About this RNA: Chemical mapping of a 177-nucleotide RNA with DMS and 2A3. The RNA was probed in 150 mM KOAc, 10 mM MgCl2 and 150 mM bicine (pH 8.5) at 24 C. For DMS, 1,301 sequencing reads were counted. For 2A3, 1,516 sequencing reads were counted.
RNA sequence: GGGAACGACUCGAGUAGAGUCGAAAAGGACCACAAGCAUGCGUCACCAUGCCCAGCUCAUUUUUAAAUUUUUUGUAGAGACGGGUUCAGCCUCCUGAGUAGCUGGGAUUAGAGGCACACGUCACCACGUCAACGAGAAAUUCGUUUCUCGUUGACGAAAAGAAACAACAACAACAAC
Reactivity to DMS in 0.01 (KOAc 150mM, MgCl2 10mM, bicine 150mM(pH8.5), 24C), signal-to-noise 2, nucleotides 027 to 126: g090g010a130c040c040a060c150a030a040g000c080a080u000g000c070g020u040c030a100c060c040a110u010g010c010c010c000a010g000c040u050c070a080u050u000u000u000u020a040a080a090u000u000u000u000u000u000g010u000a110g030a170g000a040c020g000g000g010u000u010c080a100g010c010c040u020c000c120u000g000a130g010u010a030g010c000u010g000g010g000a100u000u000a030g000a040g000g010c000a050c070a040c070g000u000c010a070c120c100a100
Reactivity to 2A3 in 0.01 (KOAc 150mM, MgCl2 10mM, bicine 150mM(pH8.5), 24C), signal-to-noise 2, nucleotides 027 to 126: g070g010a030c010c020a020c070a080a060g140c050a040u040g030c040g080u010c020a010c100c000a070u100g000c000c020c000a020g000c010u000c020a090u040u040u070u150u290a160a180a280u170u180u050u050u120u130g150u100a090g000a000g000a120c000g000g000g000u160u120c020a020g000c000c020u000c000c050u110g050a060g080u090a000g010c040u010g010g000g000a000u010u140a030g040a050g030g000c020a000c000a000c030g040u060c020a000c070c050a030
Source information: Values cover nucleotides 27 to 126.